[RMDB]
RNA sequence: GGGAACGACUCGAGUAGAGUCGAAAAGGGCAUAUAUUCCGCCGUAGACGGCGGAAAGGGUUGCAUAGUUACCGAGCAACCAGGUAACGUUCGUCGUUUUUUUUUUUAUGGUGGGUUUAUUUGCCCAGGCCGCUCUGAUCUUCGGGUCGGAGUGGCCAAAAGAAACAACAACAACAAC
Reactivity to 2A3 in 0.01 (KOAc 150mM, MgCl2 10mM, bicine 150mM(pH8.5), 24C), signal-to-noise 3, nucleotides 027 to 126: g010g000g010c020a000u010a000u000a010u080u000c000c010g000c000c010g000u010a010g010a050c010g010g010c020g000g030a010a010a010g020g000g000u020u030g010c000a010u090a110g130u190u180a130c090c070g030a020g060c000a020a030c010c020a000g150g110u100a050a040c070g020u040u090c000g010u010c000g000u000u010u000u000u000u000u000u000u000u010u000a060u050g010g030u030g080g060g050u050u020u020a030u020u100u040g000c000c000c010a000
Reactivity to DMS in 0.01 (KOAc 150mM, MgCl2 10mM, bicine 150mM(pH8.5), 24C), signal-to-noise 2, nucleotides 027 to 126: g020g000g000c010a000u010a010u010a030u000u020c010c000g000c000c000g010u000a040g000a040c020g000g010c000g000g010a010a040a040g010g000g000u010u000g010c020a100u040a120g010u030u050a080c260c060g000a170g010c020a020a020c020c030a100g000g030u030a090a170c080g000u000u020c020g010u000c000g010u010u000u000u000u030u000u130u130u080u050u010a010u000g000g020u010g000g020g000u000u020u000a030u040u000u000g020c000c000c010a100